[RMDB]
RNA sequence: GGGAACGACUCGAGUAGAGUCGAAAAGUACGAUUUUUCGAAAUCGUACGAAGGUCAGGUGGCAGCACCACGACACUGGUCGCGGCCACCGAGCCGAACAGAAUAUGUGUAAUUUCGAUUACACAAAGCAUUCGUUACGUUUCGACGUAACGAAUGCAAAAGAAACAACAACAACAAC
Reactivity to DMS in 0.01 (KOAc 150mM, MgCl2 10mM, bicine 150mM(pH8.5), 24C), signal-to-noise 2, nucleotides 027 to 126: g030u000a020c020g010a000u020u010u000u010u010c210g010a030a010a030u000c000g010u000a000c010g000a100a110g030g000u000c020a300g010g030u000g000g010c020a040g010c000a070c000c000a050c140g000a130c240a080c300u010g020g000u000c190g000c000g000g000c000c000a050c000c030g000a210g000c000c000g010a080a120c150a040g010a100a100u030a050u010g000u000g000u000a010a000u000u010u000c170g020a050u000u000a020c090a030c030a040a140a140
Reactivity to 2A3 in 0.01 (KOAc 150mM, MgCl2 10mM, bicine 150mM(pH8.5), 24C), signal-to-noise 1, nucleotides 027 to 126: g020u010a010c010g000a000u000u000u010u030u100c100g080a000a000a030u000c000g000u000a020c000g000a080a040g030g010u140c030a000g000g010u000g000g000c010a000g000c020a000c030c000a000c050g250a050c100a010c100u030g000g020u020c180g000c000g000g010c010c010a000c020c000g000a000g000c000c010g000a030a000c020a020g130a090a020u250a090u140g010u000g000u000a000a060u040u150u150c300g050a010u020u030a000c030a010c060a030a030a030